[RMDB]
RNA sequence: GGGAACGACUCGAGUAGAGUCGAAAAAUUGCUGGCCGCAGCUGGCGGACUACAAGGCAUUUACGGUUAGUGUGCCUCUGUUAUGAAAUGCAGGUUUGACUUCAUAUGUAUGCCUUGGCAUGACGUCAACUUUACUUUUAUUUCAGUUCUGGUGAUGCUCAUAAUCGGUUUUCGAACCGAUUAUGAGAAAAGAAACAACAACAACAAC
Reactivity to 2A3 in 0.01 (KOAc 150mM, MgCl2 10mM, bicine 150mM(pH8.5), 24C), signal-to-noise 4, nucleotides 027 to 156: a000u090u090g000c020u030g040g010c020c010g040c030a000g010c050u030g040g000c010g020g050a040c010u040a040c030a010a010g000g000c020a030u110u080u250a100c100g110g000u070u070a050g000u100g070u060g100c000c020u040c030u020g040u070u100a110u130g090a020a050a040u120g000c080a040g050g040u080u140u140g020a020c000u030u020c050a070u040a030u260g040u030a030u090g010c020c000u020u000g020g000c010a010u040g020a010c020g000u000c010a020a020c020u080u120u120a060c020u080u070u080u100a110u040u120u090c040a010g010u060u030c010u070g010g000u040g020a040u110g000
Reactivity to DMS in 0.01 (KOAc 150mM, MgCl2 10mM, bicine 150mM(pH8.5), 24C), signal-to-noise 1, nucleotides 027 to 156: a090u000u010g020c020u000g010g000c010c040g030c060a160g000c080u000g050g040c020g000g000a090c020u000a070c030a080a060g010g000c040a070u000u000u010a080c070g040g010u000u010a100g020u010g000u010g030c010c010u000c010u000g000u000u000a110u000g020a070a030a070u000g000c040a040g000g040u010u000u010g030a040c000u000u010c060a080u000a080u040g020u010a080u000g000c010c070u000u000g010g010c050a190u010g030a090c060g000u000c010a010a010c030u010u020u000a050c060u010u000u010u010a060u000u030u000c030a030g000u010u000c080u000g010g010u000g010a130u010g010